RNA sequence: GGGAACGACUCGAGUAGAGUCGAAAAAAGAUGCUGUCAAGAAAAUGUGUGGAGAGGUUGAGUCUGCUAUUGAAGAGGCUGAAAAGCUCCUAGCAGAGACAGGAGGAGGAGCUGAUUCCAAGUAUCAGAUGCUUACAGACUUCGGUCUGUAAGCAUCAAAAGAAACAACAACAACAAC
Reactivity to DMS in 0.01 (KOAc 150mM, MgCl2 10mM, bicine 150mM(pH8.5), 24C), signal-to-noise 1, nucleotides 027 to 126: a070a050g000a090u010g040c040u010g000u010c050a100a110g000a100a060a080a060u020g010u010g070u000g000g000a040g080a120g000g010u000u010g040a100g000u000c010u020g020c010u000a150u010u020g000a130a110g000a090g040g000c070u000g010a090a040a160a020g020c000u010c030c030u000a140g000c000a020g020a050g020a080c100a040g030g000a090g000g000a080g040g000a070g030c030u010g000a110u000u000c010c030a080a140g020u010a070u000c140a130
The record gives the reactivity of an RNA of 177 nucleotides to DMS. For DMS the reverse transcriptase was MarathonRT. The data come from the RNA Mapping Database (RMDB), library OK2TST. The RNA was probed in 150 mM KOAc, 10 mM MgCl2 and 150 mM bicine (pH 8.5) at 24 C. Reactivities are given for positions 27 through 126. The DMS profile rests on 782 reads.